Record summary: The record gives the reactivity of an RNA of 177 nucleotides to DMS and 2A3. Source: RMDB library RFMREP, as collected in RNAgym. The reactions ran in a buffer of 150 mM KOAc, 10 mM MgCl2 and 150 mM bicine (pH 8.5), at 24 C. DMS adducts were read by reverse transcription with MarathonRT. 2A3 adducts were read by reverse transcription with SuperScript II with manganese. The DMS profile rests on 1,367 reads.
RNA sequence: GGGAACGACUCGAGUAGAGUCGAAAAAAUGUUAUUUCUAGGUAUAUUGUAAAGAUAAAGGAUAACUCGGUUGGGAUUGCGUUCUGUAAUGGACGCAUGAACCAGGAAUUCCUAGUAGUCGCGUGUCGUCAUAUGUAUCCUUCGGGAUACAUAUGACAAAAGAAACAACAACAACAAC
Reactivity to DMS in 0.01 (KOAc 150mM, MgCl2 10mM, bicine 150mM(pH8.5), 24C), signal-to-noise 1, nucleotides 027 to 126: a090a040u000g010u000u000a060u010u000u000c000u000a080g000g030u010a140u010a070u000u000g000u010a050a060a140g000a080u000a040a080a050g000g000a020u000a020a100c020u010c100g000g030u000u000g020g010g020a120u000u000g000c000g000u000u000c000u000g010u000a100a090u020g010g000a000c020g000c000a010u000g000a080a110c010c000a050g000g000a070a070u000u000c000c000u000a080g010u000a040g010u000c030g030c050g000u000g000u010c100
Reactivity to 2A3 in 0.01 (KOAc 150mM, MgCl2 10mM, bicine 150mM(pH8.5), 24C), signal-to-noise 1, nucleotides 027 to 126: a010a010u090g000u050u070a080u080u060u010c040u010a130g110g000u180a210u030a090u300u230g090u060a120a100a000g030a050u050a080a220a000g000g040a010u050a020a140c050u050c130g030g090u040u100g150g000g050a040u020u060g000c000g020u040u020c020u020g000u070a030a180u200g000g010a000c040g040c000a000u020g050a000a010c000c010a020g000g000a020a060u020u030c000c000u030a030g090u020a040g000u000c020g020c070g080u000g030u040c070